[RMDB]
This 177-nucleotide RNA was probed chemically with DMS and 2A3. Values cover nucleotides 27 to 126. For 2A3, 2,570 sequencing reads were counted.
RNA sequence: GGGAACGACUCGAGUAGAGUCGAAAAUUCAUUAAACGAUGACUCCUUACAUGAUUUGGCUGCUCUUUUGAAUGAGGAUUCGGGAAUUGCACAAAGAGUCAUUGACAAUGCCCGUAUCUCCAUGGGAAAAUAGUAGGACGUUCGCGUCCUACUAUUUAAAAGAAACAACAACAACAAC
Reactivity to DMS in 0.01 (KOAc 150mM, MgCl2 10mM, bicine 150mM(pH8.5), 24C), signal-to-noise 5, nucleotides 027 to 126: u010u010c040a050u010u000a070a090a160c120g000a040u000g000a050c060u000c000c070u000u010a100c170a090u010g000a100u000u010u010g010g020c060u000g020c220u000c020u000u010u000u010g010a050a050u000g000a090g010g010a060u000u000c010g010g020g000a030a030u000u000g000c070a090c080a030a070a100g000a100g010u000c070a060u000u000g000a160c110a010a010u000g000c000c010c000g010u010a040u000c040u010c020c030a060u010g000g010g010a080
Reactivity to 2A3 in 0.01 (KOAc 150mM, MgCl2 10mM, bicine 150mM(pH8.5), 24C), signal-to-noise 3, nucleotides 027 to 126: u050u010c000a000u000u190a190a130a060c060g020a030u010g040a020c010u010c010c010u070u110a090c040a120u150g060a150u140u080u050g080g000c020u030g000c010u050c000u040u090u080u180g170a110a060u060g010a030g060g030a030u040u030c000g000g010g010a010a030u010u050g000c120a080c010a240a090a010g080a050g130u020c040a030u000u020g000a020c040a010a020u020g020c000c000c010g010u030a070u000c030u000c040c030a030u080g050g000g050a050